[RMDB]
RNA sequence: GGGAACGACUCGAGUAGAGUCGAAAAAGGAAGAGGAAGGGGAAUCGUGAUAUGGACGAUGGACAGCGGACGGCCUCUCUUUGAGACGCCUGACCGUCCAGGUGGUCUCACACGUGGACGCGGAAAGCACGGGAUGACGUUUCGACGUCAUCCCGUGAAAAGAAACAACAACAACAAC
Reactivity to DMS in 0.01 (KOAc 150mM, MgCl2 10mM, bicine 150mM(pH8.5), 24C), signal-to-noise 3, nucleotides 027 to 126: a070g010g010a070a050g000a060g020g000a060a140g000g000g000g020a160a040u010c070g000u010g020a100u040a110u050g030g000a060c020g010a100u000g010g010a030c030a020g010c080g000g000a190c170g010g000c050c080u010c040u000c050u050u030u060g010a010g050a050c240g010c000c000u000g020a300c060c000g000u020c000c020a030g000g020u040g000g000u010c050u020c100a090c050a020c000g000u000g000g000a040c050g000c070g000g020a130a120a070g020
Reactivity to 2A3 in 0.01 (KOAc 150mM, MgCl2 10mM, bicine 150mM(pH8.5), 24C), signal-to-noise 3, nucleotides 027 to 126: a000g110g010a040a010g020a020g040g050a050a080g020g000g000g100a010a060u040c000g020u010g060a170u050a170u230g060g010a000c050g050a030u040g010g050a000c000a020g050c040g030g020a030c010g010g010c010c030u020c000u000c020u110u080u250g010a020g000a000c000g000c000c000u010g010a060c010c020g080u130c050c000a010g090g110u130g100g050u010c010u010c010a020c000a000c030g070u060g010g050a050c070g010c050g040g020a100a050a000g000
Conditions: 150 mM KOAc, 10 mM MgCl2 and 150 mM bicine (pH 8.5), 24 C. This 177-nucleotide RNA was probed chemically with DMS and 2A3. It was measured as part of the RMDB library OK1LIB. DMS adducts were read by reverse transcription with MarathonRT.